[RMDB]
This 177-nucleotide RNA was probed chemically with DMS and 2A3. The RNA was probed in 150 mM KOAc, 10 mM MgCl2 and 150 mM bicine (pH 8.5) at 24 C. For DMS the reverse transcriptase was MarathonRT. The data come from the RNA Mapping Database (RMDB), library RFMREP. The DMS profile rests on 2,229 reads. 2A3 adducts were read by reverse transcription with SuperScript II with manganese.
RNA sequence: GGGAACGACUCGAGUAGAGUCGAAAAUGAUAUACCUUCGCCUCUUUAGAGUAAGGACGAUCUUCAGAGUUGAGUCUUUGAUCUUAAUUUUUUUUAAGACUAAUUCAAAGUACUCGUAGUAUAGAACGAUUAAAUGUACGUUCGCGUACAUUUAAUCAAAAGAAACAACAACAACAAC
Reactivity to DMS in 0.01 (KOAc 150mM, MgCl2 10mM, bicine 150mM(pH8.5), 24C), signal-to-noise 3, nucleotides 027 to 126: u020g010a160u000a080u000a100c090c030u000u010c060g030c110c000u000c010u000u010u010a150g000a100g020u010a050a040g010g010a110c090g010a030u000c030u010u010c080a110g000a150g000u000u000g020a030g020u000c000u000u000u000g000a020u000c040u000u000a000a000u010u000u000u060u010u000u000u010a000a010g000a200c080u000a080a070u010u010c000a010a020a010g000u000a010c010u000c010g010u010a090g020u000a080u010a100g010a060a130c200
Reactivity to 2A3 in 0.01 (KOAc 150mM, MgCl2 10mM, bicine 150mM(pH8.5), 24C), signal-to-noise 2, nucleotides 027 to 126: u050g060a020u020a040u060a180c030c000u010u070c040g050c030c000u060c000u080u050u120a060g020a010g040u030a080a060g080g040a080c040g030a050u030c010u090u070c080a050g020a070g150u120u100g060a010g030u000c000u030u000u010g010a020u000c020u010u010a060a130u150u110u100u030u120u030u020u040a000a000g000a010c020u060a110a100u110u030c000a030a040a030g020u040a050c000u000c020g030u030a010g040u010a070u030a130g110a060a040c040